[RMDB]
RNA sequence: GGGAACGACUCGAGUAGAGUCGAAAAACGUACCUAUUCGUAGGUACGUGAUUAAAAGCUAGUCAUAUAAAAGGAAGACAAGCAAUAUAGAAUCCUAUAUUAAUAGCACAUGUUUCGACAUGUGCAAUGAGUAUGUAGACUUCGGUCUACAUACUCAAAAAGAAACAACAACAACAAC
Reactivity to 2A3 in 0.01 (KOAc 150mM, MgCl2 10mM, bicine 150mM(pH8.5), 24C), signal-to-noise 3, nucleotides 027 to 126: a000c010g000u020a020c010c000u000a030u040u060c220g030u040a010g000g010u000a000c000g000u010g020a010u020u130a040a010a040a000g010c020u030a020g010u000c030a030u150a010u110a300a180a050a020g150g050a090a090g020a020c000a010a010g010c000a040a030u140a000u020a100g110a060a080u020c000c020u030a040u030a050u290u180a130a250u130a100g000c000a000c020a000u010g010u040u090u060c250g070a010c000a000u040g000u010g000c000a000a020
Reactivity to DMS in 0.01 (KOAc 150mM, MgCl2 10mM, bicine 150mM(pH8.5), 24C), signal-to-noise 2, nucleotides 027 to 126: a020c000g010u000a000c000c000u010a040u010u000c150g060u000a010g020g010u000a000c000g000u000g000a090u030u000a070a080a110a100g000c010u000a100g030u000c020a070u010a190u020a040a080a110a060g030g000a110a210g000a010c010a040a020g000c020a070a080u000a100u000a050g010a120a140u000c020c000u000a060u000a120u010u020a060a110u000a120g000c000a000c000a000u000g000u010u000u010c190g020a030c010a000u000g010u000g010c010a030a010

Chemical mapping of a 177-nucleotide RNA with 2A3 and DMS. For 2A3 the reverse transcriptase was SuperScript II with manganese. Values cover nucleotides 27 to 126. High 2A3 reactivity points to a flexible backbone, as in loops and unpaired stretches. It was measured as part of the RMDB library M2PK50. Conditions: 150 mM KOAc, 10 mM MgCl2 and 150 mM bicine (pH 8.5), 24 C.